Structure probing data (DMS) for a 177-nucleotide construct. The RNA was probed in 150 mM KOAc, 10 mM MgCl2 and 150 mM bicine (pH 8.5) at 24 C. For DMS the reverse transcriptase was MarathonRT.
RNA sequence: GGGAACGACUCGAGUAGAGUCGAAAAAGUUGCACUUUCCUUAAACAUAUAAGCAUAAUCCGAUGUUGGUGAAGGAAGGCUUCAAGCUCGAAACAUUUUUGUGCACUCAGAUCGGAUUUUGAGGUCAACUGCCUAGCAGGUUCGCCUGCUAGGCAGUAAAAGAAACAACAACAACAAC
Reactivity to DMS in 0.01 (KOAc 150mM, MgCl2 10mM, bicine 150mM(pH8.5), 24C), signal-to-noise 1, nucleotides 027 to 126: a000g000u000u000g010c070a210c020u020u030u000c070c000u000u070a040a300a160c230a100u050a080u000a220a160g000c020a000u090a000a000u000c000c020g060a060u020g050u000u000g000g000u040g000a260a040g000g000a240a090g000g050c000u070u000c190a130a130g000c060u050c080g070a190a000a030c220a080u000u000u060u000u000g070u000g000c000a090c040u000c030a000g000a070u000c000g000g010a000u000u000u000u010g000a000g060g000u070c080a060